[RMDB]
RNA sequence: GGGAACGACUCGAGUAGAGUCGAAAAGAUAUGGACGUGAUAACAGCGAUAAGAUGUGGUCGGAAACGACCAUACAUCUUUUGACGCUGGAAGCACGUCCUAAGUCAAACCCUCGUUCGCGAGGGAAGUUAGCACGAUGGUUCGCCAUCGUGCUAACAAAAGAAACAACAACAACAAC
Reactivity to 2A3 in 0.01 (KOAc 150mM, MgCl2 10mM, bicine 150mM(pH8.5), 24C), signal-to-noise 2, nucleotides 027 to 126: g050a000u100a010u210g000g020a000c000g000u020g010a040u040a240a070c000a010g000c020g040a040u030a120a010g010a000u010g020u000g030g000u030c010g000g000a090a050a030c010g020a000c000c000a000u030a000c010a010u040c000u040u120u000u070g190a060c010g000c000u000g020g000a060a050g020c000a000c020g000u010c000c000u000a000a000g030u000c020a060a040a300c010c010c020u040c000g060u100u150c300g000c020g080a000g030g010g010a010a060
Reactivity to DMS in 0.01 (KOAc 150mM, MgCl2 10mM, bicine 150mM(pH8.5), 24C), signal-to-noise 2, nucleotides 027 to 126: g010a080u000a300u010g000g000a000c000g030u000g010a050u000a120a300c000a060g010c000g010a150u000a100a030g010a030u040g030u000g000g000u000c000g020g000a130a110a240c030g000a000c000c000a100u000a020c080a050u010c000u040u000u010u010g010a170c080g000c010u000g000g000a160a070g000c000a020c000g090u000c000c000u000a020a080g010u000c020a120a090a170c000c000c010u030c000g050u000u060c160g000c020g000a000g020g000g050a010a020